About this RNA
Structure probing data (DMS and 2A3) for a 177-nucleotide construct. As a SHAPE reagent, 2A3 marks flexible, mostly unpaired nucleotides at the ribose 2'-OH. Source: RMDB library TTRDES, as collected in RNAgym. For 2A3 the reverse transcriptase was SuperScript II with manganese. For DMS, 2,392 sequencing reads were counted. The RNA was probed in 150 mM KOAc, 10 mM MgCl2 and 150 mM bicine (pH 8.5) at 24 C.
RNA sequence: GGGAACGACUCGAGUAGAGUCGAAAAGAUAUGGAGCGUACCCUUGGCAACAGCUAGGAUCGGAAACGAUCCUAGACAUGCCAAGGGUGACGCUCCUAAGUCAAACGAUUCCGUUCGCGGAAUCGAAGCCUAUAACCCUGUUCGCAGGGUUAUAGGCAAAAGAAACAACAACAACAAC
Reactivity to DMS in 0.01 (KOAc 150mM, MgCl2 10mM, bicine 150mM(pH8.5), 24C), signal-to-noise 3, nucleotides 027 to 126: g000a030u000a300u010g020g010a010g020c000g010u000a080c000c000c000u000u000g010g000c010a040a120c300a180g000c000u000a010g000g020a020u010c000g000g010a190a090a280c020g000a010u000c000c000u000a000g000a030c100a160u000g000c000c000a000a020g000g000g020u000g010a020c000g010c000u010c000c000u010a000a060g020u020c040a120a110a240c010g000a000u000u000c000c010g050u000u030c230g020c000g020g010a030a010u000c000g010a040a090
Reactivity to 2A3 in 0.01 (KOAc 150mM, MgCl2 10mM, bicine 150mM(pH8.5), 24C), signal-to-noise 2, nucleotides 027 to 126: g060a020u110a050u300g000g000a000g040c020g000u010a000c020c000c020u020u010g050g010c000a140a090c080a300g030c000u000a010g000g010a010u000c010g010g000a070a040a070c000g010a000u030c000c000u010a000g040a030c000a060u070g010c010c000a000a000g010g000g000u010g000a000c010g000c010u010c000c010u000a000a010g000u010c020a040a020a030c020g000a020u000u000c120c020g020u100u110c300g030c000g170g030a000a030u000c010g030a040a030